Source: RMDB library M2PK50, as collected in RNAgym. This 177-nucleotide RNA was probed chemically with 2A3 and DMS. DMS adducts were read by reverse transcription with MarathonRT. The reactions ran in a buffer of 150 mM KOAc, 10 mM MgCl2 and 150 mM bicine (pH 8.5), at 24 C. For DMS, 1,312 sequencing reads were counted. 2A3 adducts were read by reverse transcription with SuperScript II with manganese.

[RMDB]
RNA sequence: GGGAACGACUCGAGUAGAGUCGAAAAGUUCAGUCGUUCGCGACUGAACAAACUGUGAAGCGCGAAAACACAGAAAACAUACGGCAACGCGCGUAUCGCCGAAAACCCUGCAGUUCGCUGCAGGGAACUGCACGAUAAAGUUCGCUUUAUCGUGCAGAAAAGAAACAACAACAACAAC
Reactivity to 2A3 in 0.01 (KOAc 150mM, MgCl2 10mM, bicine 150mM(pH8.5), 24C), signal-to-noise 2, nucleotides 027 to 126: g000u000u000c000a010g010u000c010g000u050u070c180g000c010g090a030c010u010g000a010a000c000a000a010a000c010u010g010u020g030a060a030g020c000g000c010g070a090a080a190a040c020a010c010a040g150a050a100a020a020c050a110u270a120c050g000g000c050a060a020c010g020c000g000c020g030u050a080u200c050g010c020c000g030a020a030a060a090c000c000c020u010g020c010a010g000u040u140c150g030c120u000g000c000a000g000g000g000a000a000
Reactivity to DMS in 0.01 (KOAc 150mM, MgCl2 10mM, bicine 150mM(pH8.5), 24C), signal-to-noise 2, nucleotides 027 to 126: g030u000u000c000a000g010u000c010g040u010u020c180g020c000g010a000c010u000g000a020a020c000a040a070a130c010u000g000u000g010a080a130g000c020g020c000g000a080a060a050a110c020a020c000a040g000a100a060a050a120c240a110u000a090c070g000g020c030a090a120c030g010c020g050c000g030u000a050u000c170g000c070c000g000a080a080a130a090c000c000c000u000g000c000a000g000u000u010c160g030c000u030g000c000a010g000g000g030a010a020